[RMDB]
RNA sequence: GGGAACGACUCGAGUAGAGUCGAAAAACUGAAGCAACAAGGUAUUUUGCAAUCUGAGCAGCAGUCAAGGUCUCUGCCUCAUUCAAUCCUGCCUUGAAUUGGGAUGCAUUUCCCCUUGCAUUGCUAGCGUGCUCGCUGACUUCGGUCAGCGAGCACGAAAAGAAACAACAACAACAAC
Reactivity to 2A3 in 0.01 (KOAc 150mM, MgCl2 10mM, bicine 150mM(pH8.5), 24C), signal-to-noise 1, nucleotides 027 to 126: a000c140u140g030a060a000g170c060a000a020c020a030a040g200g000u000a110u030u140u100u050g060c130a110a060u070c050u100g000a030g000c000a000g000c040a000g100u150c190a150a290g060g130u070c050u000c000u050g000c000c000u080c000a000u000u000c000a000a000u120c000c000u000g000c020c000u000u020g050a080a090u020u100g000g050g070a040u210g000c060a010u040u040u040c000c000c000c000u070u030g000c000a080u010u010g060c000u040a060g270
Structure probing data (2A3) for a 177-nucleotide construct. Source: RMDB library OK1LIB, as collected in RNAgym.